RNA sequence: GGGAACGACUCGAGUAGAGUCGAAAAGAUAUGGAGAUGAACUACAAGGAGUACGUAGACGUUGAAACACGCUCUUUCGGAAACGAAAGAGCGUGUGGAGUCUAUGAAACUUGCAUCUCCUAAGUCAGAUUAUCAUUAACUUCGGUUAAUGAUAAUCAAAAGAAACAACAACAACAAC
Reactivity to DMS in 0.01 (KOAc 150mM, MgCl2 10mM, bicine 150mM(pH8.5), 24C), signal-to-noise 5, nucleotides 027 to 126: g010a070u000a300u000g000g010a010g010a030u000g000a100a060c090u040a300c010a010a010g010g020a130g020u000a110c300g000u010a000g010a010c000g000u000u020g020a230a140a010c000a000c000g010c000u000c000u000u000u000c020g010g000a120a100a160c010g000a010a010a010g000a000g010c000g010u000g000u000g010g010a080g000u000c000u000a000u000g000a120a130a120c000u000u000g000c000a010u000c010u000c000c000u000a010a070g000u000c060a140
Reactivity to 2A3 in 0.01 (KOAc 150mM, MgCl2 10mM, bicine 150mM(pH8.5), 24C), signal-to-noise 3, nucleotides 027 to 126: g030a020u070a040u160g010g000a020g000a010u020g010a110a130c110u180a050c300a010a020g030g000a010g020u020a040c170g010u000a010g000a010c050g120u270u130g090a130a110a000c000a010c000g000c020u000c000u000u000u000c000g040g010a130a110a060c020g000a000a000a000g000a000g140c000g000u010g000u000g010g010a010g000u000c000u000a010u130g010a000a000a000c000u020u010g000c010a010u000c010u000c000c000u020a160a010g040u030c030a020